[RMDB]
RNA sequence: GGGAACGACUCGAGUAGAGUCGAAAAACUGCCAUACGGGGCAGAAACACGCCUUACCAGGACUAAACAGCGUGUCUAAAAAACAGUCCUUCAUACCUGAUCUGGAGGGUAGAUCAGGAAUACUAAAAAAAUCGGGUGAAGUUCGCUUCACCCGAAACGCAAUCAUUUUCUUCGGAAAAUGAUUGCGAAAAGAAACAACAACAACAAC
Reactivity to 2A3 in 0.01 (KOAc 150mM, MgCl2 10mM, bicine 150mM(pH8.5), 24C), signal-to-noise 1, nucleotides 027 to 156: a000c010u000g040c010c000a010u070a180c140g170g000g000g050c010a010g030a030a020a000c000a000c020g000c000c000u010u050a020c030c020a000g010g000a000c000u060a200a020a050c010a000g000c000g000u000g030u040c120u080a010a000a010a000a000a000c020a000g000u000c060c020u030u100c060a080u090a130c000c000u000g010a000u000c000u090g120g060a090g020g050g070u040a000g000a000u000c010a000g040g020a000a010u060a020c060u110a030a050a040a030a000a000a090u010c010g000g000g000u000g020a010a000g020u040u110c120g020c150u000u000c000a000c000c000c000g000a000a010a000